Structure probing data (2A3 and DMS) for a 207-nucleotide construct. For DMS the reverse transcriptase was MarathonRT.
[RMDB]
RNA sequence: GGGAACGACUCGAGUAGAGUCGAAAAGUAGCCUAAGUGUAAAGUGUUUAUAAAGUCUCCAGGAUACUGUAAUGUCCCAGGCCUUCACAUCCACUCACCACUCACUCACUGUUACCAAAACACCAGUCACUGGGAUGACAAGCAUUGACAAGGAAGAAGUAACAGAGUUGUUCGCAACUCUGUUACUAAAAGAAACAACAACAACAAC
Reactivity to 2A3 in 0.01 (KOAc 150mM, MgCl2 10mM, bicine 150mM(pH8.5), 24C), signal-to-noise 4, nucleotides 027 to 156: g030u020a020g010c010c020u060a090a050g030u030g030u060a070a130a080g030u070g040u070u140u040a210u100a050a120a020g030u030c020u020c070c030a010g010g040a050u060a110c050u090g050u190a100a100u130g020u020c020c000c000a010g020g030c020c000u080u100c060a030c010a100u040c040c000a020c040u050c010a030c020c010a020c020u040c010a040c010u030c010a040c030u040g080u100u070a050c020c030a030a070a060a060c040a030c040c010a000g050u070c020a020c120u030g000g020g010a060u070g020a030c040a060a010g020c010a030u030u080g030a030c020a030a050g090g010a010a060g050a050
Reactivity to DMS in 0.01 (KOAc 150mM, MgCl2 10mM, bicine 150mM(pH8.5), 24C), signal-to-noise 2, nucleotides 027 to 156: g000u000a070g020c010c010u000a020a100g010u010g010u000a060a160a100g060u000g020u000u020u000a110u000a080a120a130g000u010c010u000c010c040a090g010g000a070u000a010c060u010g030u010a090a230u010g000u000c000c020c030a100g030g010c220c030u000u000c030a060c010a110u000c030c010a070c050u000c030a090c150c000a020c040u000c030a080c000u000c010a060c050u010g010u000u000a300c050c010a020a070a060a050c060a080c050c040a140g020u010c030a080c030u000g010g010g000a130u000g010a050c070a050a080g020c020a050u000u020g010a090c010a010a060g000g000a070a080g010a050

The reactions ran in a buffer of 150 mM KOAc, 10 mM MgCl2 and 150 mM bicine (pH 8.5), at 24 C.
For DMS, 2,690 sequencing reads were counted.
The 2A3 profile rests on 2,834 reads.